[RMDB]
This 177-nucleotide RNA was probed chemically with DMS and 2A3. The reactions ran in a buffer of 150 mM KOAc, 10 mM MgCl2 and 150 mM bicine (pH 8.5), at 24 C.
RNA sequence: GGGAACGACUCGAGUAGAGUCGAAAAAGCAGUCGAUUCGUCGACUGCUAAUGGGUCGGGACUACAUGACAGGUUCUUCGCUAGCCCUCUUUGGACCAGUAAAAAAGAGCUUAUUCGUAAGCUCUAACCGAUCAGUUACUUUCGAGUAACUGAUCGGAAAAGAAACAACAACAACAAC
Reactivity to DMS in 0.01 (KOAc 150mM, MgCl2 10mM, bicine 150mM(pH8.5), 24C), signal-to-noise 1, nucleotides 027 to 126: a000g020c000a000g010u000c000g000a050u000u000c200g000u000c000g010a000c000u010g010c020u000a020a000u000g000g030g000u000c070g020g000g000a290c040u000a040c100a020u000g030a060c090a120g010g000u010u000c050u010u010c090g030c080u000a040g000c010c000c020u000c150u000u010u000g010g030a060c020c010a080g010u030a000a050a080a060a040a000g020a010g000c020u000u000a040u000u010c150g010u000a000a030g000c010u000c000u000a030a070
Reactivity to 2A3 in 0.01 (KOAc 150mM, MgCl2 10mM, bicine 150mM(pH8.5), 24C), signal-to-noise 1, nucleotides 027 to 126: a040g000c010a000g000u000c000g000a020u010u090c120g060u000c000g170a010c000u010g050c000u010a000a050u060g030g000g000u050c040g010g010g020a010c000u060a040c100a130u140g100a030c030a060g070g000u050u010c000u020u050c030g000c040u060a050g020c010c020c000u020c100u060u050u020g040g000a000c020c020a010g080u130a010a050a000a020a010a000g000a000g010c000u020u010a010u050u040c130g070u030a000a000g010c000u030c000u000a000a040